[RMDB]
RNA sequence: GGGAACGACUCGAGUAGAGUCGAAAAGGGGAAUCGGCAGACCUAACAGCCCGACCAGCAGUCCGCCGAUCGCCGGUUUGAGCACCGGGCCCCCGGGCAGCCGGCGCGUAAUUGCCACCGACGCGUGGCGCUAUUAUCUCUUCGGAGAUAAUAGCGCAAAAGAAACAACAACAACAAC
Reactivity to DMS in 0.01 (KOAc 150mM, MgCl2 10mM, bicine 150mM(pH8.5), 24C), signal-to-noise 4, nucleotides 027 to 126: g020g010g000g000a090a040u010c020g010g000c020a070g010a050c020c120u030a130a110c100a180g000c010c020c020g020a150c080c030a140g050c090a110g000u000c000c080g010c030c000g000a020u010c100g000c000c000g000g010u010u030u060g000a130g000c090a100c020c020g000g000g030c040c120c090c020c000g000g010g000c030a090g010c020c020g010g000c020g000c140g000u030a060a060u020u010g000c000c020a020c000c030g010a090c090g020c080g020u000g000
Reactivity to 2A3 in 0.01 (KOAc 150mM, MgCl2 10mM, bicine 150mM(pH8.5), 24C), signal-to-noise 6, nucleotides 027 to 126: g020g000g010g040a040a090u030c000g010g020c010a020g040a060c010c040u070a130a060c030a060g040c020c010c000g060a100c020c040a020g040c030a010g020u020c010c020g000c000c000g010a020u040c030g010c010c000g000g040u040u070u200g110a060g020c080a090c140c000g000g090g020c020c030c000c000c000g010g010g000c010a010g030c010c000g020g010c010g000c010g020u070a100a090u120u150g010c010c010a040c010c020g090a090c070g050c030g020u040g050
The record gives the reactivity of an RNA of 177 nucleotides to DMS and 2A3. Source: RMDB library OK1LIB, as collected in RNAgym. The 2A3 profile rests on 6,609 reads. DMS adducts were read by reverse transcription with MarathonRT. Conditions: 150 mM KOAc, 10 mM MgCl2 and 150 mM bicine (pH 8.5), 24 C. The DMS profile rests on 7,302 reads.